RNA sequence: GGGAACGACUCGAGUAGAGUCGAAAAUGAUGUGCGUCUAUUGUGUGGUAACCGGCCUAUCCACAUGAUAGGUUUGUGCUAUGAGGCCGGAAAUAGCGACGGCGAAGCUGUCACGUGCACAUCUAAAGGCUUCCUGGUGCUUCGGUACCAGGAAGCCAAAAGAAACAACAACAACAAC
Reactivity to 2A3 in 0.01 (KOAc 150mM, MgCl2 10mM, bicine 150mM(pH8.5), 24C), signal-to-noise 1, nucleotides 027 to 126: u240g010a010u000g000u030g000c020g000u050c000u000a040u060u000g000u000g000u000g030g030u050a000a090c000c000g000g000c010c020u120a080u030c000c000a000c000a010u050g030a000u010a010g100g000u030u080u070g020u060g000c000u020a090u070g060a000g030g000c010c020g000g000a100a010a030u030a000g080c050g000a000c000g020g020c090g090a190a000g000c050u060g000u020c000a000c060g090u130g000c000a000c000a000u030c000u010a070a130a000
Chemical mapping of a 177-nucleotide RNA with 2A3. It was measured as part of the RMDB library OK1LIB. Values cover nucleotides 27 to 126. The reactions ran in a buffer of 150 mM KOAc, 10 mM MgCl2 and 150 mM bicine (pH 8.5), at 24 C.